Chemical mapping of a 207-nucleotide RNA with DMS. Source: RMDB library OK3TST, as collected in RNAgym. For DMS the reverse transcriptase was MarathonRT. Conditions: 150 mM KOAc, 10 mM MgCl2 and 150 mM bicine (pH 8.5), 24 C.
RNA sequence: GGGAACGACUCGAGUAGAGUCGAAAAGUUUGCCUGGGGUGAUAAUGUCAGUGCAUCCCAGAUACAUCUCUUUCCUUUGGCAAGUUGCAGACUUAGGUAGCAACCUGAAUAUGCCACCUCUUAGAGAUGGAGCAAGAGUACUUAUGAAACUUAUGCAAUUACCCGAUCGUUUCGACGAUCGGGUAAUAAAAGAAACAACAACAACAAC
Reactivity to DMS in 0.01 (KOAc 150mM, MgCl2 10mM, bicine 150mM(pH8.5), 24C), signal-to-noise 1, nucleotides 027 to 156: g010u010u000u000g020c010c040u010g000g010g010g020u000g010a060u000a070a140u020g030u000c150a290g010u000g040c020a130u010c000c000c020a090g000a120u000a010c010a010u000c020u000c010u000u000u000c000c020u000u030u000g010g030c030a080a040g000u000u000g000c010a080g020a070c080u010u010a110g050g050u040a200g010c040a020a060c050c060u020g020a080a110u000a150u000g000c000c010a000c080c020u000c060u000u000a080g010a040g000a010u010g010g000a110g040c030a170a300g010a140g040u000a040c040u000u000a060u020g000a130a120a100c070u000u000a080u000g030c050a160